This 177-nucleotide RNA was probed chemically with DMS and 2A3. The data come from the RNA Mapping Database (RMDB), library OK1LIB. Reactivities are given for positions 27 through 126. The 2A3 profile rests on 1,016 reads. The DMS profile rests on 1,492 reads. Conditions: 150 mM KOAc, 10 mM MgCl2 and 150 mM bicine (pH 8.5), 24 C.
RNA sequence: GGGAACGACUCGAGUAGAGUCGAAAAUUAGUAAUUUUGCUAAAUCUAUUGGACUUACGCCAAUUAUCGAUAAAGACUUGAGGUCUGCAGUGUCCUACGGCUGUUCCAUGAUGCAUGCCCAAGAAGAGUACAAGAUCCCGUUCGCGGGAUCUUGUACAAAAGAAACAACAACAACAAC
Reactivity to DMS in 0.01 (KOAc 150mM, MgCl2 10mM, bicine 150mM(pH8.5), 24C), signal-to-noise 1, nucleotides 027 to 126: u000u000a070g010u010a080a050u040u070u070u010g010c000u000a070a000a150u030c100u000a020u000u000g010g080a030c080u000u000a190c150g000c000c050a080a000u000u010a000u030c010g070a130u010a040a060a020g050a030c000u000u000g000a030g010g000u000c030u000g000c030a000g000u010g000u000c050c000u000a080c050g010g010c020u000g010u000u000c000c020a000u000g050a110u000g010c020a020u000g000c040c000c000a080a090g000a110a060g000a130
Reactivity to 2A3 in 0.01 (KOAc 150mM, MgCl2 10mM, bicine 150mM(pH8.5), 24C), signal-to-noise 3, nucleotides 027 to 126: u010u000a040g020u040a020a270u080u060u100u210g000c060u010a010a010a220u060c090u090a120u050u040g020g010a130c060u130u130a100c170g020c010c000a020a020u120u010a090u120c120g010a080u020a050a100a020g080a120c000u040u030g070a060g100g080u030c060u060g000c010a020g000u010g040u080c020c020u020a040c030g050g000c010u050g140u170u000c000c020a030u100g030a020u050g030c050a000u140g030c040c020c020a050a020g090a060a000g070a000